Structure probing data (2A3 and DMS) for a 207-nucleotide construct. The data come from the RNA Mapping Database (RMDB), library M2RFPK.

RNA sequence: GGGAACGACUCGAGUAGAGUCGAAAAACAGUCAGUACGCUGACUGAGGGAAACGGGAGCCGGGCUUGGGACAAGAGCCAUCCCAAGUCCAAGGCCAAGUAGGCUCUAGUGUUGGUACGCCAUCACAAAAACUGGUCUACCUUCGGGUAGACCAGAAGGAUAGUUAUAUGUUCGCAUAUAACUAUCCAAAAGAAACAACAACAACAAC
Reactivity to 2A3 in 0.01 (KOAc 150mM, MgCl2 10mM, bicine 150mM(pH8.5), 24C), signal-to-noise 6, nucleotides 027 to 156: a000c000a000g010u010c000a000g010u060a030c190g050c130u010g000a010c000u000g010a100g020g040g010a070a170a170c160g030g030g040a060g020c040c050g020g010g000c000u000u000g000g000g000a010c020a080a060g000a000g010c000c000a010u000c000c000c000a000a000g000u010c010c000a040a020g020g000c030c010a060a040g090u150a110g080g000c000u010c010u040a080g000u000g010u030u010g010g000u040a030c250g040c050c000a020u020c010a010c030a020a080a020a020a010c000u000g000g000u000c000u000a000c000c000u020u060c210g080g000g000u000a000g000a000c010c000a000g000a010a010
Reactivity to DMS in 0.01 (KOAc 150mM, MgCl2 10mM, bicine 150mM(pH8.5), 24C), signal-to-noise 2, nucleotides 027 to 156: a160c010a030g020u000c020a050g000u000a090c190g070c020u020g050a030c030u000g020a160g020g010g020a120a070a090c080g010g010g000a170g000c030c040g030g030g030c000u000u000g010g050g010a050c050a040a090g030a090g020c010c030a300u000c010c010c020a010a040g000u000c000c030a060a040g020g000c050c030a060a110g040u000a060g000g020c000u000c030u000a070g040u000g010u010u000g010g030u000a100c100g000c020c030a080u010c050a050c050a050a050a060a090a070c020u010g000g000u000c010u000a010c000c000u000u000c300g110g000g010u000a000g000a030c000c000a010g000a020a050
2A3 adducts were read by reverse transcription with SuperScript II with manganese. The DMS profile rests on 2,650 reads. The RNA was probed in 150 mM KOAc, 10 mM MgCl2 and 150 mM bicine (pH 8.5) at 24 C. DMS adducts were read by reverse transcription with MarathonRT.